Source: RMDB library RNAMAK, as collected in RNAgym.
Structure probing data (DMS and 2A3) for a 207-nucleotide construct.
Conditions: 150 mM KOAc, 10 mM MgCl2 and 150 mM bicine (pH 8.5), 24 C.
For 2A3, 2,485 sequencing reads were counted.
DMS (dimethyl sulfate) methylates the pairing face of unpaired adenines and cytosines.
The DMS profile rests on 4,166 reads.
[RMDB]
RNA sequence: GGGAACGACUCGAGUAGAGUCGAAAACAGGGGGUUCGCCCCCUGAAAAAAACCUUUGUGAGUAUCAACAGCAUCGAUCUUGAGAACCCAUUGGGUUCAAUGAUGGGGAGCUGUGACCACGCUCACUCUGGUAAAAAGAGGUCGUUCGCGACCUCAAAGAUCAAUACAGUUUCGACUGUAUUGAUCUAAAAGAAACAACAACAACAAC
Reactivity to DMS in 0.01 (KOAc 150mM, MgCl2 10mM, bicine 150mM(pH8.5), 24C), signal-to-noise 2, nucleotides 027 to 156: c020a000g000g000g010g020g050u010u020c150g040c020c000c000c010c000u000g010a000a000a050a080a040a060a010c000c000u000u000u010g000u010g010a030g010u000a070u010c050a080a010c010a030g010c020a070u000c040g010a050u020c020u010u000g000a300g030a020a030c000c000c010a300u010u010g080g070g010u000u000c010a050a110u000g000a030u000g020g030g010g020a120g050c000u010g010u000g020a100c120c170a080c120g000c010u000c000a020c000u000c040u000g030g030u010a020a070a060a100a130g000a030g020g020u000c000g010u000u010c170g000c010g000a030c000c010u000c000a000a050
Reactivity to 2A3 in 0.01 (KOAc 150mM, MgCl2 10mM, bicine 150mM(pH8.5), 24C), signal-to-noise 4, nucleotides 027 to 156: c010a000g030g000g020g020g000u020u010c070g100c010c000c000c010c020u030g010a030a000a000a000a000a000a000c020c000u030u010u000g010u000g010a020g000u050a030u130c090a140a120c000a020g010c020a070u050c030g160a050u020c030u090u230g060a200g020a090a040c020c000c070a300u200u300g000g000g000u010u050c020a000a040u080g000a000u030g000g080g000g030a210g010c000u000g000u000g000a000c030c030a140c180g010c000u000c000a010c010u030c000u000g010g010u080a050a110a020a050a030g000a000g030g000u000c000g010u060u100c200g030c030g130a000c000c000u000c000a020a010